[RMDB]
RNA sequence: GGGAACGACUCGAGUAGAGUCGAAAACGCUAAACACCAGUCGCAGACGCUAAAACUCACGCUACGUCAAGACGGAUGUGACAGCGCGAAAGCUAGCGCAAGCUUUAGCGUUACGUACGAGUAGCGAAAAUAUAAUAUUAUUCGUAAUAUUAUAUUUAAAAGAAACAACAACAACAAC
Reactivity to DMS in 0.01 (KOAc 150mM, MgCl2 10mM, bicine 150mM(pH8.5), 24C), signal-to-noise 3, nucleotides 027 to 126: c020g000c020u000a030a060a050c080a090c110c060a190g000u000c040g010c040a070g010a040c020g000c030u020a020a050a080a060c050u000c060a160c040g020c010u000a020c040g010u010c040a080a110g010a120c050g020g000a060u000g000u010g000a050c050a130g000c000g000c040g000a060a070a100g020c090u020a060g010c040g020c110a150a040g000c090u000u000u000a040g000c000g000u000u000a050c040g000u020a030c080g010a140g000u000a000g010c000g010a130
Reactivity to 2A3 in 0.01 (KOAc 150mM, MgCl2 10mM, bicine 150mM(pH8.5), 24C), signal-to-noise 4, nucleotides 027 to 126: c010g000c010u030a030a060a000c050a060c040c060a040g010u020c000g010c050a020g010a040c010g010c050u060a040a040a070a050c040u050c050a060c020g010c010u040a010c030g110u040c050a020a010g110a070c020g030g000a030u040g010u020g040a020c020a020g010c000g000c020g050a060a060a010g080c080u110a020g010c010g010c060a030a010g010c000u000u030u010a000g000c000g010u010u030a020c040g030u050a020c020g010a020g020u000a000g030c000g050a030

Structure probing data (DMS and 2A3) for a 177-nucleotide construct. Conditions: 150 mM KOAc, 10 mM MgCl2 and 150 mM bicine (pH 8.5), 24 C. DMS (dimethyl sulfate) methylates the pairing face of unpaired adenines and cytosines. For DMS the reverse transcriptase was MarathonRT. It was measured as part of the RMDB library OK1LIB.